[RMDB]
This 155-nucleotide RNA was probed chemically with 2A3 and DMS.
2A3 adducts were read by reverse transcription with SuperScript II with manganese.
The reactions ran in a buffer of 150 mM KOAc, 10 mM MgCl2 and 150 mM bicine (pH 8.5), at 24 C.
RNA sequence: GGGAACGACUCGAGUAGAGUCGAAAACUUUAGAAUUUUAGAUCUAUCCCAGCCGAAUUUAGAAUUUUAGAUUUUCGACUUUCGGCUUAAAAUAUUUAAUAAUAUUUUGGGAGAGAACCGAGAUUUCGAUUUCGGAAAAGAAACAACAACAACAAC
Reactivity to 2A3 in 0.01 (KOAc 150mM, MgCl2 10mM, bicine 150mM(pH8.5), 24C), signal-to-noise 2, nucleotides 027 to 135: c020u120u160u120a050g050a040a080u070u090u100u090a050g010a020u000c010u020a030u020c000c010c000a000g000c010c020g000a000a020u010u060u030a050g020a000a010u100u120u080u130a120g060a200u050u090u020u040c010g010a010c000u000u000u010c010g000g030c000u000u000a010a000a010a000u030a000u000u040u160a300a300u300a190a030u010a060u010u020u060u080g010g000g000a030g010a000g010a020a000c010c000g010a020g000a020u030u110u070c130g050a040u000u010u000c000g020g030a020
Reactivity to DMS in 0.01 (KOAc 150mM, MgCl2 10mM, bicine 150mM(pH8.5), 24C), signal-to-noise 1, nucleotides 027 to 135: c060u010u010u050a110g010a060a090u000u000u020u010a060g000a090u000c020u010a110u000c010c000c030a150g000c030c000g000a030a000u010u020u020a040g000a030a000u010u030u020u040a120g010a150u020u000u000u000c000g010a060c070u010u010u010c010g000g020c000u040u020a020a000a020a010u000a010u000u000u040a120a230u070a120a020u010a000u000u020u010u010g000g020g010a060g010a040g000a060a120c030c000g000a060g000a040u000u000u030c090g010a090u010u000u000c070g030g000a170